[RMDB]
RNA sequence: GGGAACGACUCGAGUAGAGUCGAAAAUGUCAAUGAUGAAUAAAAUACAGACAAGCAUAUGUCUGAAUCUUAUGUGUUGCCAUCUUAAUUUUCUGAGAAAAAAGUGAACUUGGUUCGCCAAGUUCACCGUCAAUAAUUAGUUCGCUAAUUAUUGACGAAAAGAAACAACAACAACAAC
Reactivity to 2A3 in 0.01 (KOAc 150mM, MgCl2 10mM, bicine 150mM(pH8.5), 24C), signal-to-noise 6, nucleotides 027 to 126: u030g000u010c010a020a020u070g090a100u110g050a130a050u100a070a050a020a000u100a050c010a000g030a020c010a010a040g140c100a180u240a100u280g000u010c010u020g000a020a030u010c020u030u060a040u080g140u020g010u030u020g010c000c000a030u010c050u080u160a180a170u140u040u060u040c070u060g060a090g200a090a110a030a020a030a020g000u000g000a000a000c000u000u010g000g010u050u040c090g020c060c000a000a000g000u000u000c000a000c000
Reactivity to DMS in 0.01 (KOAc 150mM, MgCl2 10mM, bicine 150mM(pH8.5), 24C), signal-to-noise 8, nucleotides 027 to 126: u000g000u000c020a010a020u010g000a140u010g000a140a020u000a010a010a020a020u000a120c010a000g010a010c010a040a220g020c280a130u010a100u000g000u000c010u000g000a080a020u000c050u000u000a010u010g000u010g010u000u000g000c050c010a010u000c050u000u000a070a080u010u000u000u000c020u010g010a150g020a010a070a040a050a080a120g000u000g000a010a000c000u000u000g000g010u000u010c250g020c000c000a000a010g000u000u000c000a000c000
The data come from the RNA Mapping Database (RMDB), library RFMREP. Chemical mapping of a 177-nucleotide RNA with 2A3 and DMS. The 2A3 profile rests on 6,957 reads. The DMS profile rests on 11,954 reads. DMS (dimethyl sulfate) methylates the pairing face of unpaired adenines and cytosines.